[RMDB]
RNA sequence: GGGAACGACUCGAGUAGAGUCGAAAAGUCAUGCCUUCGGGCAUGACAGGUACCGAGAGGUACCAUAUACAGUUUAGCAGUAGCAGACUAGACUGUAAGAACGUUUAUUUACAAGUAGGUCCUCUUGUAAGUAGACGAGCUAGGACCGAGCUACUGACUACCGAACCUUAUUCGUAAGGUUCGGUAGAAAAGAAACAACAACAACAAC
Reactivity to 2A3 in 0.01 (KOAc 150mM, MgCl2 10mM, bicine 150mM(pH8.5), 24C), signal-to-noise 1, nucleotides 027 to 156: g010u000c000a000u000g000c010c010u090u050c240g010g030g000c000a000u020g000a000c010a010g000g000u000a000c000c000g010a030g000a010g030g000u000a000c030c000a000u080a000u020a070c030a030g020u030u000u040a020g000c000a010g000u000a000g000c000a000g000a050c000u000a000g040a090c010u000g030u140a100a090g070a150a010c000g000u010u010u010a040u030u020u000a000c000a000a000g040u030a060g160g190u110c020c080u040c000u000u000g020u000a000a040g000u000a000g000a010c030g000a000g030c020u070a040g050g010a060c050c020g070a000g010c000u000a000c000u000g040a000
An RNA of 207 nucleotides, treated with 2A3 and read out base by base. Values cover nucleotides 27 to 156. The reactions ran in a buffer of 150 mM KOAc, 10 mM MgCl2 and 150 mM bicine (pH 8.5), at 24 C. Source: RMDB library OK3TST, as collected in RNAgym. For 2A3, 876 sequencing reads were counted. Values are in units of 0.01, from 0 to 300, in steps of 10.